RNA sequence: GGGAACGACUCGAGUAGAGUCGAAAAAUGGUACGCCAUCUUUCAAUUGUGCCAUCCAAAUACGUUGGUCACCACGAACUAAUUCACCUGCGUGAUUUGUAUAACUUCCGAAUUCAAACCAGAACGGCGGUUAGGAAUGGUUCGCCAUUCCUAACCGAAAAGAAACAACAACAACAAC
Reactivity to 2A3 in 0.01 (KOAc 150mM, MgCl2 10mM, bicine 150mM(pH8.5), 24C), signal-to-noise 2, nucleotides 027 to 126: a020u040g000g040u030a030c040g060c070c020a050u070c120u030u250u130c090a100a240u140u120g000u010g020c000c000a010u010c040c010a060a080a000u080a050c050g010u090u090g040g020u090c040a080c100c030a030c120g060a100a030c060u100a060a190u150u060c040a040c040c000u060g020c110g030u090g090a130u090u000u140g000u020a130u030a070a140c010u050u020c020c010g050a110a130u050u020c070a120a080a070c050c000a020g040a170a030c090g100g000
Reactivity to DMS in 0.01 (KOAc 150mM, MgCl2 10mM, bicine 150mM(pH8.5), 24C), signal-to-noise 1, nucleotides 027 to 126: a070u000g030g000u000a030c050g040c090c100a030u020c100u000u020u000c080a120a190u000u000g030u020g010c000c000a050u020c060c030a020a070a100u000a070c030g030u020u000g000g010u000c060a070c080c100a040c110g000a120a160c160u000a020a040u000u000c100a090c040c030u020g000c120g000u000g020a030u000u000u000g000u030a050u010a040a040c140u010u000c020c060g030a100a070u000u000c140a110a130a160c090c020a090g040a030a110c110g040g040